Conditions: 150 mM KOAc, 10 mM MgCl2 and 150 mM bicine (pH 8.5), 24 C.
The record gives the reactivity of an RNA of 177 nucleotides to 2A3 and DMS.
The data come from the RNA Mapping Database (RMDB), library M2PK90.

RNA sequence: GGGAACGACUCGAGUAGAGUCGAAAAGAAAAUAGGCAAAGCCAGCUCAGUCGGUAGAGCAGCAGGACUGAAACCUGCAGCGAGAGGGAUCAAGACCCUGCUCGCGCAAAAACCGAAGUUAAAAAAAACAUAGGUACUUGUUCGCAAGUACCUAUGUAAAAGAAACAACAACAACAAC
Reactivity to 2A3 in 0.01 (KOAc 150mM, MgCl2 10mM, bicine 150mM(pH8.5), 24C), signal-to-noise 2, nucleotides 027 to 126: g040a010a070a020a000u160a100g050g000c090a200a020a020g030c010c010a000g030c000u020c020a030g010u000c010g040g020u020a010g010a020g030c040a020g010c020a000g000g020a050c120u210g040a120a020a000c000c020u020g000c010a000g010c000g010a010g000a000g030g000g000a040u190c100a080a050g140a130c010c000c000u060g130c010u010c000g020c000g000c000a000a060a040a000a000c000c020g000a000a000g010u050u060a020a070a070a010a010a000a000
Reactivity to DMS in 0.01 (KOAc 150mM, MgCl2 10mM, bicine 150mM(pH8.5), 24C), signal-to-noise 2, nucleotides 027 to 126: g000a050a090a060a070u000a070g010g030c020a060a100a170g000c030c030a090g020c000u000c020a040g000u000c010g000g010u000a030g010a090g000c000a110g000c000a000g010g010a070c080u000g000a110a140a090c000c000u000g000c000a210g010c000g000a000g000a030g000g020g000a090u020c300a120a230g020a110c010c010c000u000g020c000u000c020g000c020g000c150a030a020a020a030a020c000c000g020a020a110g010u010u030a000a000a000a050a040a010a060